An RNA of 207 nucleotides, treated with 2A3 and read out base by base. It was measured as part of the RMDB library M2RFPK. Conditions: 150 mM KOAc, 10 mM MgCl2 and 150 mM bicine (pH 8.5), 24 C.

[RMDB]
RNA sequence: GGGAACGACUCGAGUAGAGUCGAAAAGAACUUUGGCCGGCUCGGAAUAGAAUCAGGGGGUGCAAACUGCCCACUGGCAGAAAGGAUUAUAGCAAAUGCGUACCCUAUUGCAAUACAGCCCGGCGAACAUAGACUACUCUAUUCGUAGAGUAGUCAAGUUGUCACUAGUGUUCGCACUAGUGACAACAAAAGAAACAACAACAACAAC
Reactivity to 2A3 in 0.01 (KOAc 150mM, MgCl2 10mM, bicine 150mM(pH8.5), 24C), signal-to-noise 1, nucleotides 027 to 156: g030a010a020c020u150u060u190g030g000c000c010g030g010c000u050c110g030g020a140a130u160a230g000a040a110u180c050a100g070g000g000g000g020u090g000c000a030a030a090c050u040g000c000c000c070a140c250u300g020g000c050a000g040a040a080a010g080g010a070u050u160a090u150a070g000c020a000a000a070u070g000c010g010u020a040c000c000c000u020a080u000u120g030c020a010a010u050a070c000a000g000c100c060c000g010g020c000g000a040a030c020a010u060a030g000a000c000u010a000c000u000c000u010a040u000u020c150g120u070a000g000a000g000u000a000g000u000c000a000a010